This 177-nucleotide RNA was probed chemically with 2A3.
RNA sequence: GGGAACGACUCGAGUAGAGUCGAAAAGACGUUCUUGAACCUUAGAUGUUAAUGAUUGUCUAACUUUAUUUUGAGAUGGAUUGAAAAGUGCUUUCGUUGGUAUCGGAAUCACUUUUUUGUCAUUAACUCCGUCAGGCCCAUUCGUGGGCCUGACGGAAAAAGAAACAACAACAACAAC
Reactivity to 2A3 in 0.01 (KOAc 150mM, MgCl2 10mM, bicine 150mM(pH8.5), 24C), signal-to-noise 1, nucleotides 027 to 126: g020a000c000g000u020u020c120u000u010g300a220a240c000c000u080u110a110g000a180u090g070u000u010a020a000u030g010a030u100u300g020u000c000u000a040a030c000u020u040u140a160u300u230u260u300g000a010g000a010u100g020g010a000u000u110g020a150a000a000a000g000u000g000c000u000u000u010c000g020u040u230g140g240u230a040u200c000g000g000a010a010u000c000a000c000u000u030u000u000u000u120g000u010c000a000u000u000a000a000c010

It was measured as part of the RMDB library OK1LIB. The RNA was probed in 150 mM KOAc, 10 mM MgCl2 and 150 mM bicine (pH 8.5) at 24 C.